[RMDB]
Chemical mapping of a 207-nucleotide RNA with 2A3 and DMS. The reactions ran in a buffer of 150 mM KOAc, 10 mM MgCl2 and 150 mM bicine (pH 8.5), at 24 C. The DMS profile rests on 5,264 reads. It was measured as part of the RMDB library M2RFPK. For 2A3 the reverse transcriptase was SuperScript II with manganese.
RNA sequence: GGGAACGACUCGAGUAGAGUCGAAAAGGUUAAUAACCUGCGCUGAGCCCUUCUCCCCCAGCUUGCCUGUGUCCUAGGGAAUUGGAAGGUCAUCCUUCACAGGAUCGUGUGGAAGUCCUGCUCGGGGUCCAAACAUGGUAAUUCGUUACCAUGUUAAGAUCAACACAUCAUUCGUGAUGUGUUGAUCAAAAGAAACAACAACAACAAC
Reactivity to 2A3 in 0.01 (KOAc 150mM, MgCl2 10mM, bicine 150mM(pH8.5), 24C), signal-to-noise 2, nucleotides 027 to 156: g010g000u040u050a060a010u090a120a060c000c000u030g020c070g030c060u100g050a030g010c000c000c000u090u080c130u090c000c010c010c010c000a020g000c020u030u070g030c020c010u040g000u020g030u060c030c010u050a040g040g000g050a060a060u120u070g060g040a010a030g030g000u090c030a110u160c000c000u030u050c010a010c000a040g040g010a080u120c060g030u050g010u050g110g010a010a050g020u020c010c050u010g020c000u000c010g000g000g000g010u000c040c020a000a040a000c000a000u000g000g000u010a020a010u040u100c050g050u040u010a000c000c000a010u000g000u000u000a030a010
Reactivity to DMS in 0.01 (KOAc 150mM, MgCl2 10mM, bicine 150mM(pH8.5), 24C), signal-to-noise 2, nucleotides 027 to 156: g010g000u000u010a150a090u000a060a120c000c020u000g000c060g020c040u000g010a090g000c030c020c020u010u000c060u010c020c000c000c000c030a130g030c040u000u000g010c010c010u000g030u000g010u000c050c010u000a130g030g020g020a120a140u000u000g000g030a080a060g040g060u000c070a130u000c020c000u000u000c090a070c060a040g010g010a050u000c080g040u000g030u010g010g010a100a090g000u000c010c020u010g000c050u000c070g010g000g020g010u000c030c040a130a050a030c000a010u000g010g030u010a010a110u000u000c300g000u000u000a000c010c000a000u010g000u000u000a030a140